[RMDB]
RNA sequence: GGGAACGACUCGAGUAGAGUCGAAAAGAAUGUAAGUGCGUAAUCGCGCCUUGACGUGAGUGAGACAAGACAGAAAGCUAUCCAAAGUAAGAUAGCAUAGCUCACAAUACGCUGAUCUGUCGUAGAAACGUGGUAUACCGUUCGCGGUAUACCACGUAAAAGAAACAACAACAACAAC
Reactivity to DMS in 0.01 (KOAc 150mM, MgCl2 10mM, bicine 150mM(pH8.5), 24C), signal-to-noise 2, nucleotides 027 to 126: g000a080a050u010g000u000a070a020g000u010g030c020g010u000a020a220u030c070g010c040g000c030c140u020u000g000a040c030g000u040g010a100g000u000g000a040g000a140c060a030a070g000a000c060a020g000a110a140a050g010c010u000a000u000c000c090a070a080a160g060u020a180a160g000a010u000a000g010c010a070u030a010g000c000u020c030a040c020a100a040u000a030c050g000c000u020g000a100u000c000u000g000u040c000g000u000a090g050a090a140
Reactivity to 2A3 in 0.01 (KOAc 150mM, MgCl2 10mM, bicine 150mM(pH8.5), 24C), signal-to-noise 3, nucleotides 027 to 126: g150a030a010u280g070u250a130a030g020u090g020c020g000u040a000a120u050c120g010c000g000c020c000u030u160g030a040c000g000u000g010a030g050u020g000a010g030a050c150a090a020g000a000c000a000g060a100a100a010g000c000u000a000u000c030c010a110a180a010g150u180a210a000g070a000u030a000g000c030a000u030a000g000c000u010c000a010c020a000a030u140a030c060g050c000u000g050a180u000c030u020g030u000c040g020u020a020g220a050a080
Chemical mapping of a 177-nucleotide RNA with DMS and 2A3. For DMS the reverse transcriptase was MarathonRT. The reactions ran in a buffer of 150 mM KOAc, 10 mM MgCl2 and 150 mM bicine (pH 8.5), at 24 C. Reactivities are given for positions 27 through 126. For DMS, 2,855 sequencing reads were counted.